This 177-nucleotide RNA was probed chemically with 2A3 and DMS. It was measured as part of the RMDB library OK2TRN.
RNA sequence: GGGAACGACUCGAGUAGAGUCGAAAACGAAGGGAUCAUCCAGCGUCGUGGUCAGCACCGUCACCGCAGCCGACACCGCGCGGUGGGUGGCGAUCAAGUCGGCCAGCGUGUCGGCGUCCAGCAGCGGGGCUAUUAUAGUCUUCGGACUAUAAUAGCCAAAAGAAACAACAACAACAAC
Reactivity to 2A3 in 0.01 (KOAc 150mM, MgCl2 10mM, bicine 150mM(pH8.5), 24C), signal-to-noise 4, nucleotides 027 to 126: c030g050a070a040g060g010g030a060u090c030a040u060c060c030a030g040c020g060u070c030g040u040g030g000u040c020a010g040c050a020c050c020g070u050c020a010c040c030g000c040a020g040c010c010g020a020c010a040c030c030g010c010g010c030g020g090u050g010g020g120u010g010g010c010g010a070u210c130a030a070g040u020c010g010g080c020c010a050g060c040g020u070g090u140c010g010g000c000g010u010c020c050a040g000c010a010g010c040g020g050
Reactivity to DMS in 0.01 (KOAc 150mM, MgCl2 10mM, bicine 150mM(pH8.5), 24C), signal-to-noise 4, nucleotides 027 to 126: c090g000a120a090g020g010g000a060u010c070a080u000c050c030a080g020c050g020u000c070g010u010g000g020u000c060a060g020c070a080c070c020g000u010c050a170c020c010g010c060a130g020c000c190g000a030c030a110c090c080g000c060g010c020g000g010u000g000g000g010u000g020g010c030g000a080u010c190a090a100g000u000c030g000g010c020c000a040g000c040g010u000g020u010c020g000g000c060g010u000c030c070a080g000c050a060g000c020g000g010